RNA sequence: GGGAACGACUCGAGUAGAGUCGAAAAGAAAGUAGCGAAAGCUGGACAGCUUCACGGUCCAGCGACGUGAAGCAAAGAGCAUCACCAUGUACGAUGCUCAAGUACGUGGAAAAGCUACGAAAAGAAAGGGUAAAGGUAACUUCGGUUACCUUUACCCAAAAGAAACAACAACAACAAC
Reactivity to DMS in 0.01 (KOAc 150mM, MgCl2 10mM, bicine 150mM(pH8.5), 24C), signal-to-noise 2, nucleotides 027 to 126: g010a030a140a170g000u000a020g010c000g060a160a190a120g010c000u000g000g000a030c050a140g070c100u000u010c080a160c050g000g000u000c000c000a020g000c000g000a030c020g000u020g000a150a100g010c130a010a040a070g010a010g010c000a010u020c120a090c180c160a060u020g010u000a020c120g030a050u000g030c090u010c060a010a120g000u000a040c020g030u000g000g000a060a050a130a180g000c020u000a000c030g000a070a080a060a070g000a060a120a070